[RMDB]
Overview
The record gives the reactivity of an RNA of 207 nucleotides to 2A3. For 2A3 the reverse transcriptase was SuperScript II with manganese. Reactivities are rounded to 0.1 and cut off at 0 and 3. Values cover nucleotides 27 to 156.
RNA sequence: GGGAACGACUCGAGUAGAGUCGAAAACACAGUGGCACGUACCUUUAGUCUCAGCUACUCGGGUGGUUGAGGUGGGAGAAUCACUUGAGCCCGGGAGGUCAAGCCUACAAUUAGCUGUGAUUGCUUCACUGCACUAUAGCCUGGGCAACAGAGCUAGCCCAGCGUAGCUUUUCGAAGCUACGCUGGGAAAAGAAACAACAACAACAAC
Reactivity to 2A3 in 0.01 (KOAc 150mM, MgCl2 10mM, bicine 150mM(pH8.5), 24C), signal-to-noise 1, nucleotides 027 to 156: c130a020c030a040g000u130g000g140c000a000c110g110u180a080c060c070u060u050u300a180g050u050c000u000c030a000g000c000u000a080c090u090c170g110g050g000u030g030g040u080u120g050a070g000g040u050g000g000g020a110g090a120a080u050c020a030c000u030u110g140a070g020c000c010c010g020g010g000a030g010g000u080c020a050a040g020c020c060u080a060c060a110a000u080u060a050g000c020u060g030u000g200a230u000u040g070c000u150u210c090a070c060u030g090c080a050c040u030a000u100a160g010c000c000u040g000g030g010c000a040a000c040a010g150a000g110c070u130a060g020